Chemical mapping of a 177-nucleotide RNA with DMS and 2A3. Conditions: 150 mM KOAc, 10 mM MgCl2 and 150 mM bicine (pH 8.5), 24 C. For 2A3, 82,389 sequencing reads were counted. The DMS profile rests on 71,312 reads. Reactivities are given for positions 27 through 126.

[RMDB]
RNA sequence: GGGAACGACUCGAGUAGAGUCGAAAAGUCGCUCGUUAUCACUACGUCCGAUCUAAAGUCGCUUAAGUCGAGCGAUAGAUCUGUGUGAGACAUUCUCGCAUGUAGUGGAUUCGAGCGAGAAUGUCUCGCACUGGACUGUAUUCGUACAGUCCAGUGCAAAAGAAACAACAACAACAAC
Reactivity to DMS in 0.01 (KOAc 150mM, MgCl2 10mM, bicine 150mM(pH8.5), 24C), signal-to-noise 9, nucleotides 027 to 126: g010u000c010g010c000u000c010g010u000u010a060u000c020a030c020u000a020c020g010u010c190c050g010a020u000c040u020a090a120a300g000u000c000g010c130u000u000a050a100g010u010c110g000a010g010c000g000a030u000a030g000a110u000c040u000g010u010g020u010g010a010g010a040c040a030u000u000c000u000c000g020c010a190u010g010u000a020g010u000g010g000a220u010u010c180g010a110g010c000g010a000g000a020a010u000g000u000c000u000c000
Reactivity to 2A3 in 0.01 (KOAc 150mM, MgCl2 10mM, bicine 150mM(pH8.5), 24C), signal-to-noise 9, nucleotides 027 to 126: g020u000c010g000c010u010c010g040u060u070a140u180c020a010c040u040a010c030g090u030c050c030g010a030u010c040u200a130a080a090g050u010c010g010c090u090u110a120a050g090u170c040g030a000g010c010g000a010u020a020g040a040u030c070u070g090u030g080u100g110a000g000a010c020a050u060u020c000u000c000g000c020a030u130g020u070a040g040u040g100g040a090u180u170c120g040a020g020c000g000a000g000a000a000u020g000u010c000u000c010